[RMDB]
Chemical mapping of a 177-nucleotide RNA with 2A3 and DMS. Values cover nucleotides 27 to 126. The DMS profile rests on 1,090 reads. DMS adducts were read by reverse transcription with MarathonRT. It was measured as part of the RMDB library M2PK50.

RNA sequence: GGGAACGACUCGAGUAGAGUCGAAAAUACGACGUAUUCGUACGUCGUAAAGGUACCAAAGUACAAAGGAGCAAAAGCAUGAGCUCCUAAAAAUCAUGCAAAACACGAGCCGAUUCGUCGGCUCGAACAACGUGUUGGGAUUCGUCCCAACACGUUGAAAAGAAACAACAACAACAAC
Reactivity to 2A3 in 0.01 (KOAc 150mM, MgCl2 10mM, bicine 150mM(pH8.5), 24C), signal-to-noise 2, nucleotides 027 to 126: u040a000c000g020a000c000g010u000a010u000u070c200g030u050a040c010g000u000c000g000u000a060a000a000g050g020u020a030c020c010a080a060a040g090u080a110c060a100a290a130g000g000a010g000c030a060a130a140a050g020c000a010u000g010a000g000c000u000c020c000u070a000a010a000a010a000u020c000a000u000g010c020a050a000a110a000c170a010c020g000a000g000c000c000g000a010u020u020c110g050u000c010g110g000c010u030c010g000a010a000
Reactivity to DMS in 0.01 (KOAc 150mM, MgCl2 10mM, bicine 150mM(pH8.5), 24C), signal-to-noise 2, nucleotides 027 to 126: u000a000c010g000a060c000g000u000a010u000u020c160g030u010a010c010g000u010c000g030u020a010a040a120g040g030u010a150c010c030a030a080a050g070u000a070c270a060a130a170g010g010a000g080c030a090a040a060a090g000c020a040u000g030a050g000c000u000c000c000u000a000a010a010a010a040u000c000a000u000g030c000a140a050a050a090c300a170c010g000a000g030c000c000g010a030u000u000c190g000u000c000g000g020c000u000c020g010a070a130